[RMDB]
RNA sequence: GGGAACGACUCGAGUAGAGUCGAAAAGAUAGAUAGUACUCGUAAAAACUCUCUUUCGCAGGCCGCGUAUUUUGAGAGACGAAGCCGUGAAGUAGCGAAAGCUACGACGAAGCGCGUGUCCGGCCGAUGCGCGAACAGCAUCACGUACGAGUACGAACACUACCGGUAAUUUCGAUUACCGGUAGUGAAAAGAAACAACAACAACAAC
Reactivity to 2A3 in 0.01 (KOAc 150mM, MgCl2 10mM, bicine 150mM(pH8.5), 24C), signal-to-noise 5, nucleotides 027 to 156: g080a050u230a020g030a040u080a050g000u010a000c000u000c010g010u020a020a040a040a130a130c020u010c000u000c020u030u070u070c030g000c060a080g070g140c080c050g000c040g010u090a190u030u150u170u180g020a010g000a000g010a020c060g050a060a010g060c040c010g010u000g040a110a020g010u010a010g000c000g020a040a050a020g000c000u000a010c010g030a020c030g090a110a030g030c020g000c010g010u040g010u000c050c050g050g030c070c050g000a010u010g000c020g000c000g010a090a060c010a040g060c010a040u070c010a010c040g010u030a000c000g010a000g000u000a010c000g000a040a000
Reactivity to DMS in 0.01 (KOAc 150mM, MgCl2 10mM, bicine 150mM(pH8.5), 24C), signal-to-noise 2, nucleotides 027 to 156: g020a180u000a100g000a300u000a150g020u010a020c010u010c020g040u000a010a070a110a120a180c030u000c010u000c010u000u000u000c030g020c010a110g030g000c090c070g010c020g010u010a050u000u000u000u000g010a110g010a040g020a120c080g010a100a100g030c050c020g010u010g000a040a160g010u000a040g040c000g000a120a110a300g000c000u000a010c020g000a120c040g010a080a100g010c000g010c000g050u010g010u000c000c000g010g030c090c090g040a010u000g000c030g020c020g010a040a070c070a080g020c030a170u020c020a060c030g020u010a000c010g010a060g030u000a010c000g000a040a130